Source: RMDB library RSTRND, as collected in RNAgym.
The record gives the reactivity of an RNA of 207 nucleotides to 2A3.
The reactions ran in a buffer of 150 mM KOAc, 10 mM MgCl2 and 150 mM bicine (pH 8.5), at 24 C.

RNA sequence: GGGAACGACUCGAGUAGAGUCGAAAACUGCGGUUCGCUCUUAAAACUGGUCGCAGAUUCAUAAUUGCCAACGACAGCAAUUACGCCCUCGCUGCUUAAGCAGUGAGCCCUCUGCCCGGAUUUGUCUGUGGAUCCGGAGCCGAAAGGCGCGCGGAGGCCUGUACUUCACCUUCGGGUGAAGUACAGGAAAAGAAACAACAACAACAAC
Reactivity to 2A3 in 0.01 (KOAc 150mM, MgCl2 10mM, bicine 150mM(pH8.5), 24C), signal-to-noise 2, nucleotides 027 to 156: c000u010g010c000g020g050u170u180c040g000c080u050c110u200u170a090a130a090a060c070u170g010g010u030c000g000c000a010g000a050u050u040c040a010u030a050a020u000u010g000c020c020a160a030c180g110a110c100a050g000c000a010a010u020u020a010c060g030c020c040c000u000c020g000c000u030g020c010u290u300a170a100g000c010a000g000u000g000a020g000c000c000c000u000c000u000g000c010c010c000g020g000a010u000u030u050g110u150c110u140g140u240g020g020a000u000c000c000g030g010a000g000c000c000g000a100a020a040g000g020c030g000c000g000c010g020g000a010g000g000